Source: RMDB library OK1LIB, as collected in RNAgym. Chemical mapping of a 177-nucleotide RNA with 2A3 and DMS. The reactions ran in a buffer of 150 mM KOAc, 10 mM MgCl2 and 150 mM bicine (pH 8.5), at 24 C. The DMS profile rests on 2,891 reads. For DMS the reverse transcriptase was MarathonRT.
RNA sequence: GGGAACGACUCGAGUAGAGUCGAAAAGACAAGAAUAAGAGGGACAAGAAUCUGACCUGCAUCUCCUCGUGGUGUCGCUCGGAAACGUGCUCAACGCGCGUCCGACGCAGGCAGAAAGUAAGAAGAAAAUCCCGUGCUAUUUCGAUAGCACGGGAUUAAAAGAAACAACAACAACAAC
Reactivity to 2A3 in 0.01 (KOAc 150mM, MgCl2 10mM, bicine 150mM(pH8.5), 24C), signal-to-noise 1, nucleotides 027 to 126: g050a010c020a030a010g080a120a140u300a020a010g030a130g000g010g010a000c060a140a000g090a010a050u000c000u010g150a200c000c010u010g020c000a010u060c040u160c090c050u190c070g000u080g000g120u070g010u050c040g040c070u000c000g000g060a000a300a000c000g000u010g000c090u080c200a120a040c070g000c000g030c030g020u000c000c000g000a000c000g000c000a000g000g000c000a000g020a000a000a000g040u160a020a010g020a000a000g110a030a130
Reactivity to DMS in 0.01 (KOAc 150mM, MgCl2 10mM, bicine 150mM(pH8.5), 24C), signal-to-noise 2, nucleotides 027 to 126: g000a060c040a070a110g000a120a050u020a020a130g010a050g000g030g010a080c260a060a060g010a200a110u000c010u000g000a090c000c020u010g010c030a030u000c030u000c020c020u000c100g010u010g000g010u000g000u000c130g000c050u000c040g010g000a020a030a010c030g010u000g040c040u010c170a090a110c210g010c020g000c120g000u010c020c030g000a070c100g020c000a040g000g000c020a010g000a040a060a110g020u040a060a150g050a090a070g020a090a070